[RMDB]
RNA sequence: GGGAACGACUCGAGUAGAGUCGAAAAACACACAACACGUUCUUCACUUAACGGUGAUACACCACCGUUAGCUAAUGUAGCUGCCAUUACGGCCAAUGUAUCGACGUUAGUUUCGAUUGCACAAAGAGCGUCCUCGUACUUUCGAGUACGAGGACGCAAAAGAAACAACAACAACAAC
Reactivity to DMS in 0.01 (KOAc 150mM, MgCl2 10mM, bicine 150mM(pH8.5), 24C), signal-to-noise 1, nucleotides 027 to 126: a060c050a070c210a060c170a000a000c020a150c000g000u010u000c040u000u060c170a140c090u000u000a000a020c000g000g000u000g000a210u000a100c140a290c300c100a030c010c000g020u000u000a010g050c050u000a080a040u020g000u000a120g000c000u000g000c040c240a110u010u010a050c100g040g000c000c160a010a000u000g000u030a010u000c080g000a050c030g000u000u000a080g000u000u000u000c050g000a200u000u000g040c000a070c040a060a090a100g000a100
Reactivity to 2A3 in 0.01 (KOAc 150mM, MgCl2 10mM, bicine 150mM(pH8.5), 24C), signal-to-noise 1, nucleotides 027 to 126: a000c080a030c030a050c040a120a050c000a050c010g030u040u000c000u100u060c030a040c040u020u030a050a000c010g030g000u000g030a030u090a160c120a050c030c000a000c010c000g000u030u070a010g010c000u070a150a230u280g040u300a050g000c020u070g030c020c020a210u230u210a080c000g010g080c000c030a110a190u090g010u060a030u100c000g010a000c040g030u040u120a030g000u000u000u000c020g000a050u000u300g020c190a010c010a060a120a100g000a000
This 177-nucleotide RNA was probed chemically with DMS and 2A3.
Values cover nucleotides 27 to 126.
For DMS the reverse transcriptase was MarathonRT.
For 2A3, 577 sequencing reads were counted.
The RNA was probed in 150 mM KOAc, 10 mM MgCl2 and 150 mM bicine (pH 8.5) at 24 C.
The data come from the RNA Mapping Database (RMDB), library OK2TST.